[RMDB]
RNA sequence: GGGAACGACUCGAGUAGAGUCGAAAAGGCAUAAUGCGCGACUCAUUCUGGGCAACGGCGCUAAAAAUCGUGUACACCGACGCGCCAAUACCAUGAUCGGUAUAGCCACGCGUAUUAUAAAUAUCCACUUAGGUUGAGCUUUCGAGCUCAACCUAAGAAAAGAAACAACAACAACAAC
Reactivity to 2A3 in 0.01 (KOAc 150mM, MgCl2 10mM, bicine 150mM(pH8.5), 24C), signal-to-noise 1, nucleotides 027 to 126: g090g040c030a020u020a040a000u030g000c000g000c020g150a080c020u010c040a150u180u020c040u180g000g000g120c040a170a100c110g000g000c040g020c000u110a210a110a080a000a000u100c050g000u080g030u230a080c090a040c090c040g020a020c050g000c010g030c020c000a010a010u020a020c000c000a040u170g180a230u210c110g020g000u010a060u050a030g010c010c000a020c020g000c010g000u010a010u020u020a020u050a000a070a000u170a000u040c000c010a070
Reactivity to DMS in 0.01 (KOAc 150mM, MgCl2 10mM, bicine 150mM(pH8.5), 24C), signal-to-noise 1, nucleotides 027 to 126: g020g020c210a020u010a050a020u020g000c000g030c010g010a210c090u000c200a150u000u000c090u010g000g000g050c060a130a170c200g000g030c000g000c010u030a000a080a060a090a030u020c090g000u010g000u020a070c140a030c290c050g000a050c100g050c010g050c000c030a200a090u000a010c020c020a000u000g000a020u010c140g050g000u010a060u000a100g030c020c100a120c030g000c020g000u000a000u000u000a050u000a080a160a050u000a080u010c010c060a290